The data come from the RNA Mapping Database (RMDB), library TTRDES. The record gives the reactivity of an RNA of 177 nucleotides to 2A3 and DMS. For DMS the reverse transcriptase was MarathonRT. For DMS, 2,327 sequencing reads were counted. The 2A3 profile rests on 4,302 reads. 2A3 is a SHAPE reagent: it acylates the 2'-hydroxyl of flexible nucleotides of all four kinds.
RNA sequence: GGGAACGACUCGAGUAGAGUCGAAAAGAUAUGGACCUUCUACGUGUGGCUUGGACCCUAGAUCGGAAACGAUCUAGGCUAGCCACAGUAGAGAGGUCCUAAGUCAAAACAGUCGUUCGCGACUGAAGAUUUGGUAGAACUUCGGUUCUACCAAAUCAAAAGAAACAACAACAACAAC
Reactivity to 2A3 in 0.01 (KOAc 150mM, MgCl2 10mM, bicine 150mM(pH8.5), 24C), signal-to-noise 2, nucleotides 027 to 126: g020a040u090a070u200g010g000a000c020c000u000u000c000u020a040c070g300u040g010u000g150g040c020u090u290g130g170a300c030c000c000u010a010g000a000u000c020g040g060a030a100a060c020g010a000u000c000u000a000g000g000c000u000a000g000c000c010a010c000a010g000u000a000g060a040g090a040g000g000u000c000c000u010a000a000g030u000c040a010a000a170a270c020a010g000u000c010g030u120u160c300g000c050g200a020c030u080g010a120a040
Reactivity to DMS in 0.01 (KOAc 150mM, MgCl2 10mM, bicine 150mM(pH8.5), 24C), signal-to-noise 3, nucleotides 027 to 126: g010a070u000a300u000g000g000a050c000c000u000u000c000u000a000c000g030u020g040u010g010g000c000u000u010g040g030a100c300c010c000u000a010g010a000u010c000g000g000a150a090a230c000g010a010u000c000u000a010g010g020c030u000a010g010c000c000a000c000a050g000u000a000g000a060g010a040g020g000u000c000c000u010a000a080g010u000c030a090a140a120a300c120a010g010u000c000g030u000u010c190g020c010g020a050c010u000g000a070a120